[RMDB]
Description:
The record gives the reactivity of an RNA of 177 nucleotides to DMS and 2A3. DMS (dimethyl sulfate) methylates the pairing face of unpaired adenines and cytosines. The reactions ran in a buffer of 150 mM KOAc, 10 mM MgCl2 and 150 mM bicine (pH 8.5), at 24 C. It was measured as part of the RMDB library OK2TRN. The 2A3 profile rests on 1,985 reads. For DMS the reverse transcriptase was MarathonRT.
RNA sequence: GGGAACGACUCGAGUAGAGUCGAAAAUUCGCGAUCAAUUGCUCGCCGAUCGAGCUGCCGAGCGUGAAGGAGAGGAAAACGCCGUUAAUGAACAUGAGCUGGCAGUGAUUUUCCAUGAAUUGGAACAAUUAGCUAUCGUGUUCGCACGAUAGCUAAUAAAAGAAACAACAACAACAAC
Reactivity to DMS in 0.01 (KOAc 150mM, MgCl2 10mM, bicine 150mM(pH8.5), 24C), signal-to-noise 4, nucleotides 027 to 126: u010u000c100g020c020g040a060u000c060a070a190u010u000g010c030u000c030g030c130c150g010a110u010c020g010a060g000c000u010g010c090c080g010a060g030c030g030u000g010a050a020g000g000a210g000a080g010g000a070a030a120a070c040g000c010c030g020u020u000a070a130u010g010a060a070c110a040u000g000a070g030c050u010g000g020c020a040g010u020g010a090u000u000u000u000c020c000a090u020g040a110a120u000u000g010g000a060a090c290a030
Reactivity to 2A3 in 0.01 (KOAc 150mM, MgCl2 10mM, bicine 150mM(pH8.5), 24C), signal-to-noise 2, nucleotides 027 to 126: u050u010c040g000c020g080a050u070c010a070a100u170u120g020c010u020c030g060c060c020g070a140u160c000g000a000g000c000u030g030c050c040g020a010g020c010g000u040g020a030a040g060g050a060g030a030g010g090a000a040a000a010c010g050c000c000g030u040u120a110a050u160g040a050a010c040a110u090g030a010g040c060u080g040g000c030a010g020u010g070a130u030u050u030u050c010c020a000u100g210a080a150u200u060g030g010a030a000c040a070